RNA sequence: GGGAACGACUCGAGUAGAGUCGAAAAGCCAUACGCCCAAGACGCCAGAGAUCCUCAACUCGCUAAUUGCCAUGACCAAUCCGCUGGAGAACUUUAGCUACAGUUCAGCAGCGGCGGCGGCGGCGGCAAGCAGUAUUUAAUUCGUUAAAUACUGCUUAAAAGAAACAACAACAACAAC
Reactivity to DMS in 0.01 (KOAc 150mM, MgCl2 10mM, bicine 150mM(pH8.5), 24C), signal-to-noise 9, nucleotides 027 to 126: g010c020c040a090u010a110c130g000c010c010c020a100a100g010a090c080g020c020c030a080g010a100g010a070u000c030c030u000c070a060a110c070u000c040g010c060u000a060a120u010u000g010c010c030a100u000g010a120c050c030a100a170u010c020c010g010c010u000g000g000a240g000a010a020c020u000u000u000a090g010c150u010a070c200a030g010u000u000c010a090g000c010a030g010c000g010g010c210g010g010c090g010g010c030g010g020c030g010g010c130
Reactivity to 2A3 in 0.01 (KOAc 150mM, MgCl2 10mM, bicine 150mM(pH8.5), 24C), signal-to-noise 6, nucleotides 027 to 126: g020c010c000a050u070a110c060g020c010c000c030a020a020g080a010c040g030c020c020a020g020a000g010a120u070c020c010u070c040a050a060c020u020c040g020c020u030a080a090u120u110g020c010c020a060u140g070a150c030c000a020a060u080c000c010g010c000u020g040g110a100g020a060a010c010u110u140u180a070g070c060u110a080c030a040g000u010u010c010a070g020c000a000g000c040g010g000c010g020g000c000g010g000c000g010g010c020g000g020c010

Background: This 177-nucleotide RNA was probed chemically with DMS and 2A3. For DMS, 15,565 sequencing reads were counted. The reactions ran in a buffer of 150 mM KOAc, 10 mM MgCl2 and 150 mM bicine (pH 8.5), at 24 C. Source: RMDB library OK2TST, as collected in RNAgym.